[RMDB]
RNA sequence: GGGAACGACUCGAGUAGAGUCGAAAACAUACAAGCAAGAUAAUGAACGGGAUGGAACGGAAAAUGUUCACAAUCGCAGAAACGGUACGAUACAGCUUCGCGUUAGCAAUAAUUUGCCCCGGACGCGGCAUACGAAAAGGUUCGCCUUUUCGUAUGCAAAAGAAACAACAACAACAAC
Reactivity to 2A3 in 0.01 (KOAc 150mM, MgCl2 10mM, bicine 150mM(pH8.5), 24C), signal-to-noise 3, nucleotides 027 to 126: c010a010u230a070c060a040a020g050c020a020a050g060a130u100a160a100u260g090a110a030c030g000g000g060a020u080g020g050a060a010c040g050g030a100a110a060a070u130g030u000u010c040a030c040a090a030u060c030g020c090a040g060a050a060a000c040g030g020u060a020c030g020a030u020a190c030a040g010c020u010u040c040g040c020g090u050u020a010g000c020a020a030u150a170a150u070u120u120g040c000c010c020c060g050g000a010c010g020c010g080
Reactivity to DMS in 0.01 (KOAc 150mM, MgCl2 10mM, bicine 150mM(pH8.5), 24C), signal-to-noise 3, nucleotides 027 to 126: c080a080u010a050c120a080a070g000c060a050a080g020a090u000a090a080u000g000a080a090c080g020g020g020a180u000g020g000a030a020c020g020g020a070a040a080a100u000g000u000u010c020a050c160a040a100u000c050g010c050a100g000a020a070a060c070g010g030u010a050c120g000a130u010a070c080a070g020c030u000u010c030g010c050g030u000u010a090g020c030a030a060u020a050a100u000u010u000g020c020c040c040c010g020g000a090c090g020c060g000